RNA sequence: GGGAACGACUCGAGUAGAGUCGAAAAUUAACAAGCACGCUUUUCAUACACCAGCAUAUGAUGUGAGUGCAUUCCGUGAUCUGAAACCUUUACCAUUCUUUUAUUAUUCUACUACACCAUGUGAAGUCCCCUUAGACCUUCGGGUCUAAGAAAAGAAACAACAACAACAAC
Reactivity to DMS in 0.01 (KOAc 150mM, MgCl2 10mM, bicine 150mM(pH8.5), 24C), signal-to-noise 9, nucleotides 027 to 129: u050u050a120a110c170a100a080g000c070a000c070g040c040u030u040u010u010c040a060u000a090c060a040c020c050a090g050c050a170u030a000u010g010a040u000g010u010g010a070g040u040g020c030a090u030u030c060c040g050u000g000a060u000c050u000g020a080a060a080c050c050u020u010u020a120c100c060a100u020u010c020u020u060u020u010a040u040u040a000u070u030c050u050a030c040u030a060c100a060c060c030a060u000g040u040g050a050a090g010u000c000c020c030
Reactivity to 2A3 in 0.01 (KOAc 150mM, MgCl2 10mM, bicine 150mM(pH8.5), 24C), signal-to-noise 9, nucleotides 027 to 129: u100u050a060a050c080a070a020g020c010a020c050g050c010u130u140u050u060c030a020u030a060c050a060c080c050a020g030c030a050u020a020u110g060a030u050g070u020g080a040g020u020g020c030a020u080u020c030c030g040u060g030a050u020c030u050g030a060a060a070c020c000u050u090u080a080c070c020a070u070u060c040u030u090u040u010a080u090u030a080u070u070c020u030a050c010u010a020c020a010c040c030a020u050g020u010g040a040a020g050u020c000c000c000
An RNA of 170 nucleotides, treated with DMS and 2A3 and read out base by base. It was measured as part of the RMDB library 15KLIB. The RNA was probed in 150 mM KOAc, 10 mM MgCl2 and 150 mM bicine (pH 8.5) at 24 C.